[RMDB]
RNA sequence: GGGAACGACUCGAGUAGAGUCGAAAAGCGGCAGUGUGGAGACCUGUUGUAAAGCGCGGCGCCCAUCGCGGUACCGCGUGAGAACGCAUCCGCGGAGGCGGAGCGGUCAGAGCCGGGAAAGAUGGCAUAUGUGUGCUCAAUUCGUUGAGCACACAUAAAAAGAAACAACAACAACAAC
Reactivity to 2A3 in 0.01 (KOAc 150mM, MgCl2 10mM, bicine 150mM(pH8.5), 24C), signal-to-noise 4, nucleotides 027 to 126: g030c030g020g000c020a040g030u010g010u060g140g040a040g020a060c000c020u030g000u020u040g090u080a050a060a030g020c000g000c010g020g010c010g010c000c010c010a140u210c080g050c140g020g010u020a050c010c000g010c020g010u040g000a000g030a020a020c010g000c020a240u000c000c000g000c040g000g010a070g150g060c000g000g000a010g000c020g010g000u020c040a020g000a000g050c020c000g010g010g030a060a110a030g130a070u120g030g030c060a020
Reactivity to DMS in 0.01 (KOAc 150mM, MgCl2 10mM, bicine 150mM(pH8.5), 24C), signal-to-noise 4, nucleotides 027 to 126: g000c060g000g010c060a080g000u020g020u010g000g010a080g000a070c060c040u000g010u010u000g000u010a070a050a220g010c020g000c020g010g010c030g030c000c000c010a150u040c220g010c130g010g030u010a110c010c020g000c000g030u000g000a130g000a050a040c030g000c000a170u000c010c010g030c010g020g040a140g020g030c020g000g000a050g000c010g010g000u010c020a130g000a150g010c020c040g000g010g000a090a030a070g000a090u010g010g010c080a220

Source: RMDB libraries RFM100 and RFMREP, as collected in RNAgym. Chemical mapping of a 177-nucleotide RNA with 2A3 and DMS. Values are in units of 0.01, from 0 to 300, in steps of 10. The reactions ran in a buffer of 150 mM KOAc, 10 mM MgCl2 and 150 mM bicine (pH 8.5), at 24 C. Values cover nucleotides 27 to 126.